[RMDB]
RNA sequence: GGGAACGACUCGAGUAGAGUCGAAAAGAAGGUGUGUUCGCACACCUUCAAAUAGGUCAGACAAAAGCUUCCUGGAGUCAAGACCUGAAAACCAAAGGUGCAAAACCACCUACUUCGGUAGGUGGAAGAUACUCUUCUCCUUCGGGAGAAGAGUAUCAAAAGAAACAACAACAACAAC
Reactivity to DMS in 0.01 (KOAc 150mM, MgCl2 10mM, bicine 150mM(pH8.5), 24C), signal-to-noise 3, nucleotides 027 to 126: g000a000a000g000g030u000g010u000g010u000u000c260g030c000a030c000a000c020c000u000u000c000a030a080a070u010a050g000g000u000c000a180g020a020c010a030a200a160a070g010c190u000u020c120c010u020g010g010a300g010u010c000a080a060g010a030c000c000u000g000a070a010a080a140c030c030a030a090a100g040g020u000g020c210a120a060a100a120c000c010a000c010c000u000a010c000u010u020c100g030g010u000a000g000g020u000g000g000a010a010
Reactivity to 2A3 in 0.01 (KOAc 150mM, MgCl2 10mM, bicine 150mM(pH8.5), 24C), signal-to-noise 2, nucleotides 027 to 126: g010a000a000g010g000u010g000u000g020u020u140c200g030c050a000c000a000c000c000u000u000c010a000a010a000u110a000g000g000u010c000a010g020a030c010a020a100a020a000g010c110u220u120c070c020u030g020g020a030g020u020c050a110a120g020a020c000c010u020g030a080a080a000a000c010c000a060a040a020g150g030u200g080c050a020a060a030a140c010c000a000c010c000u010a000c000u010u050c210g080g000u010a000g000g000u000g000g000a010a000